The record gives the reactivity of an RNA of 177 nucleotides to 2A3 and DMS.
It was measured as part of the RMDB library OK1LIB.
For DMS the reverse transcriptase was MarathonRT.
Reactivities are rounded to 0.1 and cut off at 0 and 3.
The 2A3 profile rests on 14,141 reads.
Conditions: 150 mM KOAc, 10 mM MgCl2 and 150 mM bicine (pH 8.5), 24 C.

[RMDB]
RNA sequence: GGGAACGACUCGAGUAGAGUCGAAAAGAACGCCAAGAGGCGAGACCGAGACCGACAAUCACGCUAACUCGGAAAAGUGGCAUAGCGUCAGGAGUCCACUUUCGGAAAAGCCGAAAGAACGGCAGAAAUUAUGGAGCUAUUUCGAUAGCUCCAUAAUAAAAGAAACAACAACAACAAC
Reactivity to 2A3 in 0.01 (KOAc 150mM, MgCl2 10mM, bicine 150mM(pH8.5), 24C), signal-to-noise 9, nucleotides 027 to 126: g040a040a000c020g020c010c010a130a060g130a150g120g030c020g010a020g030a010c010c000g000a030g030a050c020c040g040a030c050a060a060u080c020a040c050g020c010u060a090a020c010u020c030g160g020a100a050a020a020g070u070g030g010c060a080u050a120g040c020g050u040c050a050g020g120a040g030u020c000c000a010c000u000u010u010c010g010g020a040a130a100a080g140c010c010g020a020a020a000g050a120a040c060g020g000c010a020g090a010a190
Reactivity to DMS in 0.01 (KOAc 150mM, MgCl2 10mM, bicine 150mM(pH8.5), 24C), signal-to-noise 9, nucleotides 027 to 126: g000a110a060c050g010c010c020a130a170g010a150g010g010c010g000a060g000a250c010c020g010a070g000a110c070c220g000a080c110a100a140u030c130a050c060g010c030u010a090a110c100u000c020g020g000a070a040a080a080g010u000g000g020c080a100u020a060g000c060g010u020c110a090g010g000a170g000u030c010c050a110c030u000u000u010c010g010g000a090a100a120a150g010c000c000g000a040a040a050g000a080a080c110g000g010c040a100g010a050a060